[RMDB]
RNA sequence: GGGAACGACUCGAGUAGAGUCGAAAACAAGGAGGGCUUUAGUAUUCCAAAACUGUUUAAAAAACGAUCAAAAGACACUGGACGCUACGCCGUCCUGAACAAUACUUAAGCUGCUGACGCGUCAUCAGGAAUUUACAGUUUUCGAACUGUAAAUUCCAAAAGAAACAACAACAACAAC
Reactivity to 2A3 in 0.01 (KOAc 150mM, MgCl2 10mM, bicine 150mM(pH8.5), 24C), signal-to-noise 8, nucleotides 027 to 126: c050a020a030g110g020a030g020g020g000c010u060u050u020a010g020u020a060u050u060c050c000a040a050a040a080c100u110g080u090u120u150a080a110a020a010a010a020c080g040a060u120c150a100a050a050a030g040a040c050a010c090u030g010g000a000c010g010c020u130a050c100g080c130c000g070u000c000c010u000g000a040a010c010a050a050u030a040c000u030u060a030a010g000c010u100g050c040u060g060a040c040g010c040g080u050c010a090u030c030a040
Reactivity to DMS in 0.01 (KOAc 150mM, MgCl2 10mM, bicine 150mM(pH8.5), 24C), signal-to-noise 4, nucleotides 027 to 126: c100a060a130g000g010a100g010g000g000c020u020u010u010a040g020u000a050u010u000c150c060a060a110a060a110c130u010g010u000u010u000a000a050a140a110a100a050c060g000a090u080c110a090a070a090a100g020a120c150a100c160u000g040g000a010c160g010c030u000a040c300g000c090c000g000u000c000c000u000g000a100a070c300a020a020u010a030c060u000u000a040a050g010c000u000g030c000u000g000a090c090g000c160g000u000c060a040u040c140a090